[RMDB]
RNA sequence: GGGAACGACUCGAGUAGAGUCGAAAAGAUAUGGACGUUGAACUACGGAAGAUCGCGAUCUCCUUGGAUUUAGAAUCGGAAACGAUUCUUGUCAGGAGCAGAGCGAUCUUCCGCAACGUCCUAAGUCGAAAUCUAGGUUCUUCGGAACCUAGAUUUCAAAAGAAACAACAACAACAAC
Reactivity to 2A3 in 0.01 (KOAc 150mM, MgCl2 10mM, bicine 150mM(pH8.5), 24C), signal-to-noise 2, nucleotides 027 to 126: g090a080u080a140u180g010g010a020c050g000u020u040g040a190a170c240u300a070c300g030g040a000a010g010a010u020c000g020c030g090a150u080c010u030c000c030u130u290g280g060a070u300u300u300a020g000a010a000u010c030g000g150a020a070a010c050g000a010u020u010c000u000u010g000u000c020a000g000g040a020g020c220a000g050a020g000c020g020a000u000c010u000u000c020c000g000c000a000a000c000g020u060c000c000u000a030a000g100u010c000
Reactivity to DMS in 0.01 (KOAc 150mM, MgCl2 10mM, bicine 150mM(pH8.5), 24C), signal-to-noise 2, nucleotides 027 to 126: g030a120u010a300u000g030g010a000c010g010u000u010g000a140a110c160u010a300c050g000g000a020a000g000a010u010c000g010c000g000a290u000c000u000c040c010u010u000g020g010a010u000u030u010a010g040a020a000u000c020g000g000a120a110a150c000g030a000u010u000c000u020u020g010u000c040a050g010g010a010g040c260a060g010a300g000c010g020a000u000c000u000u000c000c040g020c030a010a020c010g010u000c000c000u000a010a080g010u000c090
Structure probing data (2A3 and DMS) for a 177-nucleotide construct. The 2A3 profile rests on 1,693 reads. For DMS, 1,088 sequencing reads were counted. Conditions: 150 mM KOAc, 10 mM MgCl2 and 150 mM bicine (pH 8.5), 24 C. For 2A3 the reverse transcriptase was SuperScript II with manganese.